Conditions: 150 mM KOAc, 10 mM MgCl2 and 150 mM bicine (pH 8.5), 24 C. The record gives the reactivity of an RNA of 207 nucleotides to 2A3 and DMS. Values cover nucleotides 27 to 156. For DMS, 3,702 sequencing reads were counted. The 2A3 profile rests on 4,831 reads. The data come from the RNA Mapping Database (RMDB), library M2RFPK. 2A3 adducts were read by reverse transcription with SuperScript II with manganese.

RNA sequence: GGGAACGACUCGAGUAGAGUCGAAAAAGAUCGAUUACGAUCGAUCAAUGAUGCCCCUCACCCACCUCUGAAGAUCCCAGGUGGGCGAGGGAUCGGAGCACGGGAUCACGAGCAGUACGCUGCUCGAAAAAGAACUAGACCUUCGGGUCUAGUUCAACAUGAAUUAGAACUUCGGUUCUAAUUCAUGAAAAGAAACAACAACAACAAC
Reactivity to 2A3 in 0.01 (KOAc 150mM, MgCl2 10mM, bicine 150mM(pH8.5), 24C), signal-to-noise 5, nucleotides 027 to 156: a010g000a010u010c000g000a010u040u080a090c230g040a020u000c000g010a000u000c020a010a080u240g110a070u180g080c000c000c000c000u010c000a020c000c000c000a000c010c010u050c040u110g080a100a040g010a040u010c010c010c000a000g000g000u000g000g000g000c000g000a010g000g000g010a020u110c090g110g070a070g070c130a090c170g000g000g020a010u010c030a000c020g010a010g000c000a000g010u050a030c280g030c100u010g000c000u010c000g010a010a010a000a000a010g000a000a010c000u010a010g000a000c020c010u030u110c260g060g000g000u000c000u000a000g000u000u000c000a000a000
Reactivity to DMS in 0.01 (KOAc 150mM, MgCl2 10mM, bicine 150mM(pH8.5), 24C), signal-to-noise 2, nucleotides 027 to 156: a100g000a000u000c000g020a020u000u000a100c160g040a100u010c010g000a020u000c000a090a080u000g000a140u000g030c070c000c000c020u000c000a040c000c000c010a040c040c000u000c000u000g010a140a090g010a090u010c000c020c000a080g010g030u000g000g000g010c000g000a030g020g010g020a000u000c000g030g000a140g050c120a140c160g040g000g000a110u010c010a230c030g010a030g040c000a020g040u000a130c270g060c000u000g000c000u000c020g030a010a060a080a080a070g010a040a000c000u000a030g000a020c000c000u000u000c300g070g020g020u000c010u000a000g000u000u000c010a040a170